[RMDB]
RNA sequence: GGGAACGACUCGAGUAGAGUCGAAAAGUCUUCACUGAUGCGGUAGGCAACACUGUCCAUGUGCUGAGAGGUCCCAAGAGACAAUCAGCAGCCGCCUCACCGCGGUCCACAGAUCAAACGACGGUGGCCCAAAGUCCAGCUCGCAGCUGAGUACUACGUUAAGGAGUAAGUUCGCUUACUCCUUAACAAAAGAAACAACAACAACAAC
Reactivity to 2A3 in 0.01 (KOAc 150mM, MgCl2 10mM, bicine 150mM(pH8.5), 24C), signal-to-noise 3, nucleotides 027 to 156: g020u010c030u120u190c160a100c150u150g020a100u120g000c010g000g010u070a030g020g000c000a080a070c040a050c100u110g060u120c050c010a110u160g030u040g030c000u000g000a010g010a040g260g020u010c010c040c020a110a050g030a030g000a010c020a020a040u010c000a000g000c000a000g030c010c060g000c020c010u040c060a030c030c010g010c020g000g000u010c030c000a040c030a060g020a110u120c070a130a150a060c100g030a000c020g070g030u010g020g000c010c010c030a000a070a010g010u010c010c000a000g000c020u010c060g080c060a060g000c000u000g010a020g020u020a050c050u050a030c060
Reactivity to DMS in 0.01 (KOAc 150mM, MgCl2 10mM, bicine 150mM(pH8.5), 24C), signal-to-noise 3, nucleotides 027 to 156: g030u000c040u000u000c070a160c030u000g010a080u000g020c020g020g050u010a030g010g010c010a070a060c040a020c030u010g020u000c030c060a130u000g010u020g000c000u000g000a070g020a190g040g040u000c000c020c040a140a100g030a110g020a050c020a100a200u010c020a030g000c000a060g040c020c020g010c010c030u000c200a060c040c040g020c060g010g020u000c020c060a140c120a130g000a090u000c040a030a090a130c050g000a070c010g030g040u000g000g000c020c010c010a020a110a120g010u000c040c030a060g010c040u000c040g010c020a110g000c040u000g000a100g020u000a100c050u000a070c170
An RNA of 207 nucleotides, treated with 2A3 and DMS and read out base by base. Values cover nucleotides 27 to 156. For 2A3 the reverse transcriptase was SuperScript II with manganese. The RNA was probed in 150 mM KOAc, 10 mM MgCl2 and 150 mM bicine (pH 8.5) at 24 C. The 2A3 profile rests on 2,027 reads.